Description: An RNA of 207 nucleotides, treated with DMS and 2A3 and read out base by base.
[RMDB]
RNA sequence: GGGAACGACUCGAGUAGAGUCGAAAACUCGCGCGAACAUCGAGGCGUGGAGCGCGACAUGAAUCAGCCUCAAUUAGAUUAAUGGUCGACAGAUCAGCGGCGAUCAGCGACCGAAUUAGAAGCCGCGACCGGAAGAGGAGACGCUCGACGGACGUCACGUAAUAGUACGAUUCGUCGUACUAUUACGAAAAGAAACAACAACAACAAC
Reactivity to DMS in 0.01 (KOAc 150mM, MgCl2 10mM, bicine 150mM(pH8.5), 24C), signal-to-noise 2, nucleotides 027 to 156: c020u000c030g020c040g010c020g040a120a090c040a090u000c010g000a050g060g090c020g050u000g010g000a190g020c000g000c000g000a100c070a140u000g010a140a080u010c070a080g000c000c010u000c020a110a100u010u000a080g030a170u000u010a090a130u000g020g010u000c010g030a140c090a120g020a120u020c060a100g050c030g030g000c030g020a020u000c030a150g030c080g000a060c010c000g010a050a060u000u010a110g000a090a050g000c010c000g020c000g000a080c040c010g010g010a060a120g000a100g010g010a170g010a060c030g020c020u020c020g020a180c070g030g010a050c000g010u020c050a250
Reactivity to 2A3 in 0.01 (KOAc 150mM, MgCl2 10mM, bicine 150mM(pH8.5), 24C), signal-to-noise 5, nucleotides 027 to 156: c010u000c010g010c000g000c000g070a300a030c000a020u060c050g020a010g000g010c030g020u020g010g010a040g010c000g000c010g040a040c090a200u260g090a070a100u150c070a070g010c000c000u020c010a020a080u130u130a070g090a120u050u190a100a100u170g000g010u010c010g020a090c080a100g020a010u020c030a030g020c000g020g000c000g010a000u010c020a000g010c000g000a000c000c000g010a010a010u090u040a040g030a150a000g000c010c000g030c010g010a060c010c020g050g020a100a040g030a070g050g060a090g050a080c060g070c090u040c030g050a040c020g060g010a010c040g040u050c030a020

2A3 adducts were read by reverse transcription with SuperScript II with manganese. It was measured as part of the RMDB library OK3TST. The RNA was probed in 150 mM KOAc, 10 mM MgCl2 and 150 mM bicine (pH 8.5) at 24 C. For DMS the reverse transcriptase was MarathonRT.